[RMDB]
RNA sequence: GGGAACGACUCGAGUAGAGUCGAAAAGCACAAUUCUUCGGAAUUGUGCAAAUAAAACCGUGCGCGGACUCUACCGCAAAUGAGCACGCAGAGAACAUAAAAAAACCGGACGCUUCGGCGUCCGGAACAUAUGUAGUACCUUCGGGUACUACAUAUGAAAAGAAACAACAACAACAAC
Reactivity to DMS in 0.01 (KOAc 150mM, MgCl2 10mM, bicine 150mM(pH8.5), 24C), signal-to-noise 3, nucleotides 027 to 126: g000c000a000c000a000a010u000u000c000u000u030c150g020g010a010a000u000u000g010u000g010c000a020a000a050u000a060a070a130a130c140c020g010u010g000c050g020c000g000g000a110c130u010c250u010a080c030c040g010c110a100a100a060u000g010a150g010c030a020c030g020c080a070g000a120g010a090a070c110a080u020a000a000a110a080a090a140a090c010c000g010g010a040c000g020c000u010u040c200g010g030c000g010u000c000c020g010g000a010a030
Reactivity to 2A3 in 0.01 (KOAc 150mM, MgCl2 10mM, bicine 150mM(pH8.5), 24C), signal-to-noise 2, nucleotides 027 to 126: g000c000a000c000a010a000u000u000c000u040u060c230g040g010a010a000u020u000g000u000g000c000a000a000a000u020a000a020a000a040c020c000g000u000g000c060g000c010g000g130a150c050u050c080u300a130c020c010g000c000a060a060a070u150g000a020g000c010a000c050g010c100a010g060a010g030a280a020c040a090u290a070a190a060a000a000a000a020c000c000g000g010a010c000g020c020u030u060c290g110g000c000g000u020c030c000g020g000a000a000
An RNA of 177 nucleotides, treated with DMS and 2A3 and read out base by base. Reactivities are given for positions 27 through 126. For DMS, 1,926 sequencing reads were counted. The 2A3 profile rests on 2,707 reads.